[RMDB]
RNA sequence: GGGAACGACUCGAGUAGAGUCGAAAACACCUUGACGGACAGCCCGUCAGAGCAGUAGCCAGGGGCGGAUUCCCCUUGGCAGUGGUUUGCGGGGGCCGAUAGGUUUGAGCCAUGAGAGAAGUGCCGCAGACUUGCUUAGAUUCGUCUAAGCAAGUCUAAAAGAAACAACAACAACAAC
Reactivity to 2A3 in 0.01 (KOAc 150mM, MgCl2 10mM, bicine 150mM(pH8.5), 24C), signal-to-noise 1, nucleotides 027 to 126: c030a020c000c000u040u070g070a050c020g000g000a050c040a050g190c000c000c010g050u120c020a000g030a010g000c010a040g100u210a030g030c000c000a000g000g000g030g000c080g110g090a140u300u300c020c000c000c000u030u070g000g000c000a000g000u050g010g220u000u050u070g000c000g000g020g000g030g000c000c020g040a050u080a030g020g020u030u090u220g000a020g000c030c020a090u070g000a040g010a010g010a160a000g040u040g070c020c020g030c010
Reactivity to DMS in 0.01 (KOAc 150mM, MgCl2 10mM, bicine 150mM(pH8.5), 24C), signal-to-noise 4, nucleotides 027 to 126: c100a120c030c020u010u000g010a110c100g000g000a130c150a160g010c100c000c000g010u010c020a020g000a040g000c050a060g010u010a160g020c010c020a010g010g020g020g010c220g030g000a190u020u010c120c000c010c010u000u000g010g010c010a060g010u000g000g000u000u000u000g020c030g010g010g000g000g000c030c020g010a150u000a030g000g010u000u000u000g000a110g000c010c020a060u000g000a150g010a090g000a060a100g010u010g000c010c040g010c180